[RMDB]
An RNA of 207 nucleotides, treated with 2A3 and DMS and read out base by base. The 2A3 profile rests on 1,820 reads. It was measured as part of the RMDB library M2RFPK. Conditions: 150 mM KOAc, 10 mM MgCl2 and 150 mM bicine (pH 8.5), 24 C. The DMS profile rests on 1,960 reads.
RNA sequence: GGGAACGACUCGAGUAGAGUCGAAAAGAGAUGGCGAGAGCCAUCGGUAGUAUAGCGAAAAUCAUAAAUGAGAAGAGCUCUAAACGCCUAAGUAGAGUUAAAAUCAUUAGACAGGCACUACUACAAACACGGCCUCGAACGUUCGCGUUCGAGGCAAUCUUAUAGCUCAGUUCGCUGAGCUAUAAGAAAAAGAAACAACAACAACAAC
Reactivity to 2A3 in 0.01 (KOAc 150mM, MgCl2 10mM, bicine 150mM(pH8.5), 24C), signal-to-noise 3, nucleotides 027 to 156: g090a010g010a000u010g000g010c020g010a050g020a010g080c000c000a000u000c010g000g000u010a000g000u000a000u060a050g040c050g070a070a120a060a050u130c080a070u090a230a120a020u050g020a010g030a150a020g030a010g000c000u000c000u020a120a180a070c110g090c090c090u090a110a040g050u030a010g020a000g000u020u050a080a150a030a060u010c000a010u000u040a030g030a030c030a040g090g030c050a000c030u020a010c000u010a010c090a020a170a000c120a030c100g120g000c000c010u000c000g000a010a000c000g000u100u080c170g010c000g120u000u010c000g020a000g000g000c010a010a000
Reactivity to DMS in 0.01 (KOAc 150mM, MgCl2 10mM, bicine 150mM(pH8.5), 24C), signal-to-noise 1, nucleotides 027 to 156: g000a050g030a010u000g000g000c020g000a290g000a300g000c000c010a010u000c000g000g030u020a090g020u020a050u000a050g010c010g010a050a070a160a100u000c020a140u010a090a110a080u000g000a070g000a200a180g000a110g010c000u000c000u000a010a200a100c060g010c190c060u000a080a110g000u000a060g000a060g000u000u000a020a060a080a130u000c020a020u000u000a160g010a100c060a120g020g000c070a050c100u000a010c030u010a060c080a070a110a110c100a070c120g020g000c000c000u000c000g030a030a020c030g000u000u020c300g020c000g060u000u020c000g000a000g070g010c020a020a000